Chemical mapping of a 177-nucleotide RNA with DMS and 2A3. The reactions ran in a buffer of 150 mM KOAc, 10 mM MgCl2 and 150 mM bicine (pH 8.5), at 24 C. The data come from the RNA Mapping Database (RMDB), libraries RFM100 and RFMREP. 2A3 adducts were read by reverse transcription with SuperScript II with manganese.
RNA sequence: GGGAACGACUCGAGUAGAGUCGAAAAACUUGUCUGCCGUUCGAACAACAAGAACGAACUCUACGUAAUGCCGGGAUACCCGUGGCAGCGAUAGCUGUUUGCCUGUUCGAAAACUUUUUGGGAGGUGAAGUUUAUCAAAUUUCGAUUUGAUAAACUUAAAAGAAACAACAACAACAAC
Reactivity to DMS in 0.01 (KOAc 150mM, MgCl2 10mM, bicine 150mM(pH8.5), 24C), signal-to-noise 9, nucleotides 027 to 126: a070c040u000u010g010u010c050u010g010c050c030g020u000u010c040g010a050a070c040a080a090c140a080a070g010a100a170c030g000a040a030c020u000c010u000a020c020g010u010a080a100u010g010c020c010g000g000g000a210u020a090c100c020c010g020u020g010g020c010a030g000c010g010a170u010a040g010c110u010g000u000u000u010g010c090c040u000g000u000u000c020g000a020a030a090a100c130u000u010u010u010u020g010g000g000a050g010g010u010g000
Reactivity to 2A3 in 0.01 (KOAc 150mM, MgCl2 10mM, bicine 150mM(pH8.5), 24C), signal-to-noise 9, nucleotides 027 to 126: a000c030u050u070g040u030c050u070g080c020c020g060u040u040c030g030a050a010c010a030a000c020a080a060g060a100a030c020g000a020a020c010u000c010u020a010c010g040u060a140a060u060g010c010c000g000g010g100a160u220a300c020c010c020g100u130g030g000c010a010g000c010g070a080u050a030g040c090u020g020u020u030u060g040c010c020u020g020u020u010c010g000a020a020a060a090c040u100u120u040u140u120g050g010g000a030g000g030u070g050